An RNA of 207 nucleotides, treated with DMS and 2A3 and read out base by base. For 2A3, 2,432 sequencing reads were counted.

RNA sequence: GGGAACGACUCGAGUAGAGUCGAAAAGGCAUGUCGAGGACCCGUCACCUCGUUAAUCAAUGGGAAAAACGUAACUGCAAACGACGAUACGUUCGCACUGGCAGCCUAAGGGCCGCCGUCCUCUGCCUAGUUUACUGACGGGCUAGAGUCGCAAGACCUCCGAUAGAUUGUUCGCAAUCUAUCGGAGAAAAGAAACAACAACAACAAC
Reactivity to DMS in 0.01 (KOAc 150mM, MgCl2 10mM, bicine 150mM(pH8.5), 24C), signal-to-noise 1, nucleotides 027 to 156: g030g030c070a040u000g040u000c020g010a030g030g000a090c020c000c010g030u000c100a070c040c020u000c000g040u000u010a110a120u000c050a040a080u010g000g000g000a010a050a060a080a120c060g030u000a050a090c040u020g000c020a050a090a030c020g030a120c080g000a220u000a140c070g010u000u000c040g000c070a030c090u000g000g010c000a010g010c200c020u010a070a090g070g010g020c010c020g000c010c000g000u000c040c000u000c030u000g000c030c020u010a160g030u000u000u000a090c080u000g010a020c010g010g000g000c050u030a050g050a180g030u010c000g000c040a000a120g000a150c170
Reactivity to 2A3 in 0.01 (KOAc 150mM, MgCl2 10mM, bicine 150mM(pH8.5), 24C), signal-to-noise 4, nucleotides 027 to 156: g060g050c070a040u100g030u180c000g000a000g000g000a010c000c010c010g010u000c020a010c000c000u000c020g110u030u010a020a000u020c060a040a050u060g010g000g000a040a030a060a000a010c080g000u050a070a080c060u120g000c070a060a080a040c040g090a020c020g060a120u050a100c020g030u040u030c020g000c010a060c120u080g010g000c000a010g020c000c000u090a150a210g040g010g000c000c060g000c030c020g020u040c000c000u030c000u010g000c010c010u030a110g020u020u040u120a190c120u120g040a000c010g000g020g000c000u040a010g000a000g060u120c060g030c090a060a010g030a080c020
Overview: Reactivities are given for positions 27 through 156.